[RMDB]
RNA sequence: GGGAACGACUCGAGUAGAGUCGAAAAGAUAUGGAUUCGUGUACCAUCAACAGCGCAUGUCGGAAACGACAUGCGACAUGAUGACACAGAAUCCUAAGUCAAAGGACUAUGGUUCGCCAUAGUCCAACCUAACAUCAAUGUUCGCAUUGAUGUUAGGAAAAGAAACAACAACAACAAC
Reactivity to DMS in 0.01 (KOAc 150mM, MgCl2 10mM, bicine 150mM(pH8.5), 24C), signal-to-noise 7, nucleotides 027 to 126: g010a050u000a300u010g000g000a010u010u000c010g010u000g010u010a160c300c040a030u000c040a040a080c300a180g000c020g000c000a000u000g010u000c000g010g000a110a070a210c000g000a000c000a000u000g000c000g000a000c070a120u000g010a020u010g020a080c010a000c010a150g010a010a010u000c000c000u000a020a110g020u000c060a100a150a160g000g000a020c000u000a000u000g000g000u000u010c290g020c000c000a000u000a010g000u000c000c000a020a020
Reactivity to 2A3 in 0.01 (KOAc 150mM, MgCl2 10mM, bicine 150mM(pH8.5), 24C), signal-to-noise 8, nucleotides 027 to 126: g040a010u040a020u160g000g010a010u000u010c030g000u020g020u090a240c170c050a080u090c090a100a230c060a200g060c010g000c020a000u010g000u010c000g000g020a040a040a050c010g000a000c010a010u000g000c010g010a000c000a010u170g020a020u060g010a010c010a000c060a050g020a000a000u000c010c000u010a090a010g050u020c070a110a070a160g010g000a000c000u000a000u020g010g120u060u110c300g090c110c000a000u000a000g000u000c010c000a000a010
This 177-nucleotide RNA was probed chemically with DMS and 2A3. The reactions ran in a buffer of 150 mM KOAc, 10 mM MgCl2 and 150 mM bicine (pH 8.5), at 24 C. For DMS the reverse transcriptase was MarathonRT. DMS (dimethyl sulfate) methylates the pairing face of unpaired adenines and cytosines. Reactivities are rounded to 0.1 and cut off at 0 and 3.